[RMDB]
RNA sequence: GGGAACGACUCGAGUAGAGUCGAAAAGCAAGCGGGAUCUUCUCAUAGGGUGAUGGGCGGGGUUCACCGUAGACUAUAUCGAGAUCAAAAUCAUCCUGUUCAAAACGUGCAUAUUCUGUGCUGGCUGAGUCUGCUUAGUUUUCGAACUAAGCAGACUAAAAGAAACAACAACAACAAC
Reactivity to DMS in 0.01 (KOAc 150mM, MgCl2 10mM, bicine 150mM(pH8.5), 24C), signal-to-noise 1, nucleotides 027 to 126: g000c100a080a110g010c020g000g020g000a080u010c040u010u000c050u000c070a120u000a030g000g010g030u010g020a030u000g000g000g020c140g000g000g000g030u000u000c050a040c080c080g020u000a040g000a100c040u010a040u010a050u000c170g010a110g010a040u000c100a020a040a080a040u000c130a030u000c000c030u000g000u000u000c120a040a060a090a150c120g040u010g000c080a030u020a090u020u000c070u000g030u000g010c020u010g000g000c100u020g020
Reactivity to 2A3 in 0.01 (KOAc 150mM, MgCl2 10mM, bicine 150mM(pH8.5), 24C), signal-to-noise 1, nucleotides 027 to 126: g060c040a000a000g080c060g020g000g050a080u030c090u110u020c040u100c060a070u120a060g080g020g030u150g040a090u060g010g030g030c120g010g010g010g060u050u140c040a040c040c000g000u010a030g020a060c090u020a010u020a020u280c030g030a030g020a030u040c010a040a040a050a020u020c000a020u060c010c050u010g060u050u030c130a190a030a090a000c070g020u070g050c000a030u020a100u210u160c040u090g030u010g030c020u020g100g010c060u100g020